This 207-nucleotide RNA was probed chemically with DMS and 2A3. For DMS, 4,736 sequencing reads were counted. It was measured as part of the RMDB library OK3TST.
[RMDB]
RNA sequence: GGGAACGACUCGAGUAGAGUCGAAAAAUAUGUCCAGUGUCAACACUAUUAUUGACCAGGCUCGUAAUGGUGUUCUACCUUUAAGUAUCAUUCCAGCUGCAUCAGCUACAAGACUUGUUGUUAUUACACCUAGCCUUGAAGUGUUUUCCAAGAUUAGGCUAUUCAUAACUUUCGAGUUAUGAAUAGCAAAAGAAACAACAACAACAAC
Reactivity to DMS in 0.01 (KOAc 150mM, MgCl2 10mM, bicine 150mM(pH8.5), 24C), signal-to-noise 2, nucleotides 027 to 156: a080u010a040u000g000u000c050c060a090g000u010g030u000c060a040a050c020a040c040u000a110u010u010a060u010u010g040a020c000c010a220g000g030c000u000c040g010u000a070a060u000g010g040u010g030u000u000c050u000a100c030c030u010u000u000a070a100g020u000a090u000c080a170u000u010c060c020a090g020c040u010g000c060a100u000c060a080g010c020u030a130c110a070a110g000a100c060u000u000g010u020u000g030u000u000a090u000u000a060c030a060c040c000u000a040g030c030c000u000u000g000a030a080g040u010g000u000u000u000u000c020c010a040a080g010a130u000u000a080g000
Reactivity to 2A3 in 0.01 (KOAc 150mM, MgCl2 10mM, bicine 150mM(pH8.5), 24C), signal-to-noise 2, nucleotides 027 to 156: a000u120a090u090g090u030c060c000a030g040u040g060u160c020a000a020c010a000c060u040a020u090u040a040u020u220g030a030c050c060a100g110g000c090u010c030g040u050a010a080u030g000g000u010g020u000u040c000u030a050c000c000u030u080u100a090a040g010u030a060u130c040a040u150u000c060c030a030g000c020u020g000c050a050u090c050a160g000c020u040a030c040a130a050g030a050c010u030u050g000u050u000g010u050u080a070u050u050a020c030a010c000c020u030a020g000c010c020u000u030g030a040a020g060u020g040u070u040u050u020c010c010a050a020g040a120u100u130a090g110